[RMDB]
RNA sequence: GGGAACGACUCGAGUAGAGUCGAAAAGAUAUGGAUCACUACCCACCCUAUCUCAGGCGAAGAACGUUGUCUAGCUCGGAAACGAGCUAGACAACGGGAGCCUGAUCUAGGAGGUGAUCCUAAGUCACUAUGUAGAAGAGUUCGCUCUUCUACAUAGAAAAGAAACAACAACAACAAC
Reactivity to DMS in 0.01 (KOAc 150mM, MgCl2 10mM, bicine 150mM(pH8.5), 24C), signal-to-noise 2, nucleotides 027 to 126: g010a150u010a210u010g000g000a000u000c020a010c000u000a190c010c010c000a300c190c000c010u000a010u000c120u000c000a010g000g000c000g000a130a160g020a120a170c000g010u000u020g020u010c000u000a030g000c020u000c000g000g000a060a150a210c000g010a010g030c000u000a010g010a020c000a010a000c000g010g000g000a200g010c010c000u000g030a010u010c160u000a010g000g000a060g020g000u000g010a010u000c000c000u000a040a100g020u010c170a210
Reactivity to 2A3 in 0.01 (KOAc 150mM, MgCl2 10mM, bicine 150mM(pH8.5), 24C), signal-to-noise 1, nucleotides 027 to 126: g070a060u300a200u300g000g000a010u000c000a020c030u220a300c050c040c020a010c000c020c020u020a010u010c020u000c020a000g000g000c060g090a300a010g090a260a040c040g020u000u010g020u070c000u010a000g000c000u060c010g050g040a050a090a070c010g020a000g030c020u000a000g020a030c010a000a000c000g040g000g000a000g050c000c000u000g030a000u010c010u010a010g000g000a000g010g000u000g000a000u000c000c010u000a130a010g020u020c000a010
The record gives the reactivity of an RNA of 177 nucleotides to DMS and 2A3. The RNA was probed in 150 mM KOAc, 10 mM MgCl2 and 150 mM bicine (pH 8.5) at 24 C. The data come from the RNA Mapping Database (RMDB), library TTRINS.